[RMDB]
RNA sequence: GGGAACGACUCGAGUAGAGUCGAAAAUUAAUCCGGCUUUAAGUUGACGAGGGCAGGGUUUAUCGAGACAUCGGCGGGUGCCCUGCGGUCUUCCUGCGACCGUUAGAGGACUGGAAAACCAAUUUAAUAUCCUUCAAGAGUUCGCUCUUGAAGGAUAAAAAGAAACAACAACAACAAC
Reactivity to DMS in 0.01 (KOAc 150mM, MgCl2 10mM, bicine 150mM(pH8.5), 24C), signal-to-noise 2, nucleotides 027 to 126: u000u000a060a100u000c020c010g000g000c030u010u000u000a070a070g010u020u000g010a060c100g000a090g010g010g000c020a020g000g010g000u000u000u000a060u000c040g010a190g000a050c100a040u000c070g000g020c090g000g010g000u010g010c040c020c030u000g010c050g000g020u000c020u000u010c030c020u000g020c110g000a080c040c000g000u000u010a100g030a080g000g000a100c040u000g020g000a040a050a040a160c030c060a060a170u030u000u000a070a120
Source information:
Structure probing data (DMS) for a 177-nucleotide construct. Values cover nucleotides 27 to 126. Conditions: 150 mM KOAc, 10 mM MgCl2 and 150 mM bicine (pH 8.5), 24 C. Source: RMDB library M2PK90, as collected in RNAgym. The DMS profile rests on 1,501 reads.